Annotation: This 207-nucleotide RNA was probed chemically with 2A3 and DMS. For DMS the reverse transcriptase was MarathonRT. The RNA was probed in 150 mM KOAc, 10 mM MgCl2 and 150 mM bicine (pH 8.5) at 24 C.

RNA sequence: GGGAACGACUCGAGUAGAGUCGAAAACACAAUUCUCUAAGCGAUGAGAAGCGUGUGAAAAAUUAGGGAAGGGCUACGGCUAUAAUCCUAAGAAAGCUUAUCUACAAGCGGAGGUAUUCUCAGAACGAAAACCAUUUGGCGUUCGCGCCAAAUGGAAGAUAAUUAUUUGGUUCGCCAAAUAAUUAUCAAAAGAAACAACAACAACAAC
Reactivity to 2A3 in 0.01 (KOAc 150mM, MgCl2 10mM, bicine 150mM(pH8.5), 24C), signal-to-noise 3, nucleotides 027 to 156: c030a010c010a020a030u030u000c020u000c010u080a210a170g140c100g160a150u090g000a080g010a010a000g000c020g000u040g000u040g070a000a090a040a030a030u050u040a030g000g000g030a060a040g110g020g020c030u030a000c090g040g000c000u010a020u090a260a060u070c000c000u020a010a010g050a060a070a000g010c020u040u070a070u110c040u080a120c050a120a020g020c030g000g030a020g030g030u090a130u080u050c030u010c000a030g050a090a050c050g040a030a050a020a070c000c000a010u010u000u000g000g000c000g040u060u050c230g010c000g000c060c020a000a000a000u000g000g000a000a000
Reactivity to DMS in 0.01 (KOAc 150mM, MgCl2 10mM, bicine 150mM(pH8.5), 24C), signal-to-noise 1, nucleotides 027 to 156: c010a040c000a090a220u000u000c000u000c000u000a120a160g030c170g000a210u020g020a060g010a000a080g000c300g000u010g000u000g000a000a040a040a140a130u000u010a050g010g010g000a110a140g020g020g050c020u000a100c210g060g010c030u000a080u000a050a090u010c020c000u030a040a050g000a060a090a100g000c030u000u000a060u000c080u030a140c070a060a070g010c030g020g020a060g000g000u000a130u010u000c000u000c000a110g020a080a120c070g010a090a050a140a170c010c010a040u000u020u000g000g020c000g040u000u030c300g030c010g000c000c000a000a030a010u000g000g020a020a140